[RMDB]
Structure probing data (2A3 and DMS) for a 177-nucleotide construct. 2A3 adducts were read by reverse transcription with SuperScript II with manganese. For DMS, 1,144 sequencing reads were counted. It was measured as part of the RMDB library RFMREP. The RNA was probed in 150 mM KOAc, 10 mM MgCl2 and 150 mM bicine (pH 8.5) at 24 C. For DMS the reverse transcriptase was MarathonRT.
RNA sequence: GGGAACGACUCGAGUAGAGUCGAAAAGGAGUUUGCACCUCUCCCUGCCCGGGUACUCGGGCCGCCGCUGCAAAGCCAACUUUGGAAAAAGUUUUUGGGGGGAGACUUUGGCCUUGAGGUGCCCGGCCUUGUUUCUUUAGUUCGCUAAAGAAACAAGAAAAGAAACAACAACAACAAC
Reactivity to 2A3 in 0.01 (KOAc 150mM, MgCl2 10mM, bicine 150mM(pH8.5), 24C), signal-to-noise 1, nucleotides 027 to 126: g050g010a040g040u050u210u170g080c080a090c000c000u060c010u040c000c000c000u000g100c010c000c040g050g010g000u000a000c000u000c020g000g000g000c040c010g000c020c000g000c050u130g020c110a100a070a060g020c010c000a040a070c050u160u120u140g030g000a150a040a020a050a090g040u060u020u060u220u300g010g010g010g000g060g000a040g020a000c000u050u120u190g000g030c030c000u030u300g030a050g050g050u010g040c010c000c030g000g000c000
Reactivity to DMS in 0.01 (KOAc 150mM, MgCl2 10mM, bicine 150mM(pH8.5), 24C), signal-to-noise 2, nucleotides 027 to 126: g010g000a120g010u000u000u010g000c180a200c270c000u000c000u000c030c000c020u020g000c150c000c010g020g000g010u000a090c060u000c020g010g000g020c000c080g020c120c070g020c060u010g020c090a030a080a090g000c090c070a100a100c080u010u030u010g010g030a070a140a040a030a000g000u000u000u000u000u010g010g020g010g010g030g000a060g000a020c010u000u000u010g000g000c000c000u000u000g020a030g010g030u000g010c000c040c020g000g010c140